[RMDB]
RNA sequence: GGGAACGACUCGAGUAGAGUCGAAAAUGUGAGGAGUGAGGUCGGGAUGUACCUCGUGUCCUUGGGGCAUCCUGUCCUAGCAGCUGGUGGUUGGAGUGGAAGCUCAAGCAAGGAGGGGUCAGCUGCCCCAAAAGAUUCACUUCGGUGAAUCUUUUGGAAAAGAAACAACAACAACAAC
Reactivity to DMS in 0.01 (KOAc 150mM, MgCl2 10mM, bicine 150mM(pH8.5), 24C), signal-to-noise 3, nucleotides 027 to 126: u010g010u020g020a090g000g010a190g020u010g010a010g010g020u010c020g020g010g000a040u000g020u010a110c020c000u010c140g020u010g010u010c150c100u000u010g000g000g000g000c020a020u010c020c020u000g000u000c020c010u000a110g020c020a030g000c020u000g000g000u010g000g010u010u000g010g000a050g030u010g010g020a080a140g000c030u010c060a080a110g010c110a070a090g000g000a140g000g000g000g010u000c020a070g000c040u000g010c010c300
Reactivity to 2A3 in 0.01 (KOAc 150mM, MgCl2 10mM, bicine 150mM(pH8.5), 24C), signal-to-noise 1, nucleotides 027 to 126: u240g000u020g020a060g030g020a070g050u160g070a010g030g010u020c020g060g000g030a000u000g040u230a300c020c000u010c060g000u090g060u030c060c000u020u140g000g010g010g020c010a020u000c020c000u010g050u040c010c010u020a010g000c000a000g030c010u000g000g040u060g080g070u110u140g120g000a050g030u080g010g110a060a000g030c000u010c030a000a050g040c000a040a040g040g000a070g000g000g020g000u010c000a000g000c000u030g030c000c000